RNA sequence: GGGAACGACUCGAGUAGAGUCGAAAAGAUAUGGAGCCAAUGGACAUGGAGGAGUGUCGGAAACGACAUGACUCCAACAGCCAUGGGCUCCUAAGUCAAAAGCAGCAAGUGUUCGCACUUGCUGCAAGACUUGCAUUUUCUUCGGAAAAUGCAAGUCAAAAGAAACAACAACAACAAC
Reactivity to DMS in 0.01 (KOAc 150mM, MgCl2 10mM, bicine 150mM(pH8.5), 24C), signal-to-noise 2, nucleotides 027 to 126: g000a050u010a060u020g000g010a040g050c000c000a120a000u010g000g000a020c060a300u010g020g000a030g000g000a300g010u000g010u000c000g040g000a030a030a050c000g030a020c010a010u000g000a260c000u000c000c000a050a030c260a100g010c000c000a000u000g000g000g010c000u000c000c000u000a000a020g000u010c010a200a070a130a260g030c000a000g000c000a010a000g000u000g000u020u040c300g020c010a000c020u010u000g000c000u020g000c030a030a020
Reactivity to 2A3 in 0.01 (KOAc 150mM, MgCl2 10mM, bicine 150mM(pH8.5), 24C), signal-to-noise 1, nucleotides 027 to 126: g000a000u000a010u080g020g010a000g000c020c000a020a000u030g000g040a030c250a300u300g010g020a010g000g000a020g030u000g010u030c000g020g000a050a020a000c010g010a010c000a050u070g010a040c030u060c000c020a020a010c010a010g000c000c000a010u000g000g000g020c000u010c000c000u000a010a000g030u000c000a050a020a000a150g020c000a010g000c020a000a000g000u020g030u120u300c300g080c170a000c000u000u000g010c000u000g020c000a010a000